[RMDB]
RNA sequence: GGGAACGACUCGAGUAGAGUCGAAAAAUCGGAGAGGACAUCGAAACGCCGGUCUGGCGCGAUAUCGAUGCAGGCACGGUAGAGACGAACUAUCAGCGGUUUGCCCGUGCGGUCGCUGAUGGAACGACUCCAUCAGUCGUUUCGACGACUGAUGGAGAAAAGAAACAACAACAACAAC
Reactivity to 2A3 in 0.01 (KOAc 150mM, MgCl2 10mM, bicine 150mM(pH8.5), 24C), signal-to-noise 2, nucleotides 027 to 126: a020u070c040g000g000a020g000a040g090g040a050c020a010u020c020g000a050a100a010c020g000c030c010g110g240u150c130u270g050g010c020g000c030g060a030u050a030u200c020g030a020u060g000c020a020g030g060c040a010c140g000g080u070a080g020a000g000a120c020g000a040a050c000u030a000u020c010a030g060c000g040g070u060u160u300g040c060c030c040g100u300g030c030g000g020u020c000g000c000u030g000a020u000g030g010a010a010c020g050a040
Reactivity to DMS in 0.01 (KOAc 150mM, MgCl2 10mM, bicine 150mM(pH8.5), 24C), signal-to-noise 2, nucleotides 027 to 126: a030u010c050g010g020a140g000a120g000g010a130c020a030u000c010g010a020a140a080c030g010c020c010g000g020u020c120u010g010g000c010g010c050g000a120u010a040u000c020g000a030u010g010c060a070g000g000c050a110c020g000g010u010a070g010a110g020a220c020g020a040a290c000u000a010u000c030a030g000c030g000g010u000u000u010g020c020c100c220g010u010g000c010g000g000u010c010g010c010u000g000a000u000g020g000a020a170c060g000a200
Chemical mapping of a 177-nucleotide RNA with 2A3 and DMS. 2A3 adducts were read by reverse transcription with SuperScript II with manganese. The reactions ran in a buffer of 150 mM KOAc, 10 mM MgCl2 and 150 mM bicine (pH 8.5), at 24 C. The DMS profile rests on 1,761 reads. For DMS the reverse transcriptase was MarathonRT. The data come from the RNA Mapping Database (RMDB), library OK2TST.